This 207-nucleotide RNA was probed chemically with 2A3 and DMS. The DMS profile rests on 2,963 reads. 2A3 adducts were read by reverse transcription with SuperScript II with manganese.
RNA sequence: GGGAACGACUCGAGUAGAGUCGAAAAGGGAGAUUCGUCUCCCGCUACCCGUAGGUUCCCGUACUUUUGACGAUCUCGGGUGGCUUCGAAAGAGGCCAUCUCUAGCGUGGAUCGAUAAGUACGUGAACCUAAACGGCUCCGAGGCGUUCGCGCCUAAACGUAAAUGGAACUUCGGUUCCAUUUACGUAAAAGAAACAACAACAACAAC
Reactivity to 2A3 in 0.01 (KOAc 150mM, MgCl2 10mM, bicine 150mM(pH8.5), 24C), signal-to-noise 4, nucleotides 027 to 156: g000g020g000a010g010a010u060u120c210g090u000c100u000c010c010c000g010c010u140a110c010c000c020g050u010a000g000g000u010u000c000c020c000g000u000a000c000u030u080u090u210g230a100c030g000a010u020c010u000c010g020g000g000u010g010g000c010u000u010c020g100a120a060a030g010a000g000g000c000c000a010u000c070u000c070u060a110g100c060g230u230g060g000a000u000c010g010a030u010a030a000g000u000a000c000g010u000g000a000a000c010c000u000a000a010a000c000g010g010c010u020c050c020g070a020g030g000c020g040u000u070c120g010c020g030c180c060u150a230a250
Reactivity to DMS in 0.01 (KOAc 150mM, MgCl2 10mM, bicine 150mM(pH8.5), 24C), signal-to-noise 1, nucleotides 027 to 156: g050g020g000a030g040a090u000u000c170g050u000c000u000c000c000c000g000c100u000a080c020c010c010g010u000a020g020g000u010u000c000c050c000g010u010a000c010u000u010u020u000g000a260c140g020a010u000c000u000c010g000g040g030u000g000g010c010u020u020c000g000a110a090a300g020a020g000g020c000c000a000u000c010u000c070u010a110g010c200g040u020g070g030a000u000c000g000a170u000a000a010g000u000a020c000g010u000g010a020a000c000c000u000a000a010a040c080g010g020c020u000c020c020g000a090g020g000c010g000u000u000c080g000c040g010c000c000u000a010a150